[RMDB]
Chemical mapping of a 177-nucleotide RNA with DMS. Conditions: 150 mM KOAc, 10 mM MgCl2 and 150 mM bicine (pH 8.5), 24 C. The data come from the RNA Mapping Database (RMDB), library M2PK90.
RNA sequence: GGGAACGACUCGAGUAGAGUCGAAAAAAUAUGCUCGACAGGCUGCCUGUCCGUCAGAGCUUUUAGAUCUUCUGAUCUUUCCCUGCAGCAUAUCGCUUAUGCAUCAAGCGAUUGUCGGAUCACACAAUUGCUUGAGGAUCUUCGGAUCCUCAAGCAAAAAAGAAACAACAACAACAAC
Reactivity to DMS in 0.01 (KOAc 150mM, MgCl2 10mM, bicine 150mM(pH8.5), 24C), signal-to-noise 1, nucleotides 027 to 126: a130a100u010a050u010g010c010u000c040g010a040c040a080g010g000c000u010g010c130c170u000g000u000c020c040g020u000c050a130g020a040g020c010u000u000u010u010a020g010a020u000c000u000u020c300u030g020a010u000c000u000u000u000c000c000c020u010g020c050a110g020c050a050u040a020u000c020g010c050u000u000a100u010g020c120a150u000c070a040a010g010c000g010a030u000u000g000u000c100g040g020a090u030c110a040c110a060c150a040a110